[RMDB]
The record gives the reactivity of an RNA of 177 nucleotides to DMS. The reactions ran in a buffer of 150 mM KOAc, 10 mM MgCl2 and 150 mM bicine (pH 8.5), at 24 C. Reactivities are given for positions 27 through 126.
RNA sequence: GGGAACGACUCGAGUAGAGUCGAAAAGCAAAUACCUUCGGGUAUUUGCAAAAACUUUACCACUGACCGAUAUGUGGUAUAUAAAUGGUCGGGUUGAUCAAAAAAGGUGGGGCUUCGGCCCCACCAACUAUCUAGAGUAGUUCGCUACUCUAGAUAGAAAAGAAACAACAACAACAAC
Reactivity to DMS in 0.01 (KOAc 150mM, MgCl2 10mM, bicine 150mM(pH8.5), 24C), signal-to-noise 2, nucleotides 027 to 126: g000c000a000a000a000u000a000c000c000u000u010c200g030g030g000u000a000u000u000u030g000c000a020a050a040a110a070c070u010u000u000a000c000c000a010c000u000g000a270c010c000g000a010u000a240u010g000u000g030g000u000a000u000a010u000a020a020a010u000g010g000u000c000g000g000g020u010u020g010a070u010c060a000a040a080a090a100a130g010g020u000g000g000g030g020c000u000u010c240g020g010c000c000c030c000a000c000c000a000a050